Chemical mapping of a 177-nucleotide RNA with DMS and 2A3. 2A3 adducts were read by reverse transcription with SuperScript II with manganese. DMS adducts were read by reverse transcription with MarathonRT. The reactions ran in a buffer of 150 mM KOAc, 10 mM MgCl2 and 150 mM bicine (pH 8.5), at 24 C.
[RMDB]
RNA sequence: GGGAACGACUCGAGUAGAGUCGAAAAAGGAAAGGAAGAUAUUAGAACAAUUCCACCUUCAGAAAACUGAAAUCACACACAGUCAGACACUAGCCGUCCUCAGCCAGAAACGAGAAAAAUUAGCUCGCAUAGCUAGUCGGUUCGCCGACUAGCUAUGAAAAGAAACAACAACAACAAC
Reactivity to DMS in 0.01 (KOAc 150mM, MgCl2 10mM, bicine 150mM(pH8.5), 24C), signal-to-noise 2, nucleotides 027 to 126: a040g000g000a060a170a090g000g020a030a000g000a080u000a090u010u050a120g040a180a060c150a120a130u030u000c000c000a020c000c010u000u020c110a030g000a060a020a180a030c070u000g010a040a070a100u030c130a020c060a040c070a010c040a000g000u000c070a060g000a020c130a110c090u000a070g000c050c030g030u000c020c020u000c010a040g000c030c090a040g030a070a080a030c040g010a050g010a000a090a000a090a060u000u010a140g000c080u020c060g000
Reactivity to 2A3 in 0.01 (KOAc 150mM, MgCl2 10mM, bicine 150mM(pH8.5), 24C), signal-to-noise 3, nucleotides 027 to 126: a010g110g040a110a060a000g080g020a060a060g070a060u110a110u280u300a130g100a220a050c110a110a030u020u030c000c000a050c040c000u050u050c020a060g090a060a060a010a020c020u090g020a010a050a040u140c040a010c000a010c000a000c010a040g080u060c000a020g070a060c010a030c080u060a050g030c040c010g000u010c000c010u030c020a040g000c000c000a020g040a090a010a000c060g000a010g090a000a110a050a000a030u090u010a000g030c010u010c010g010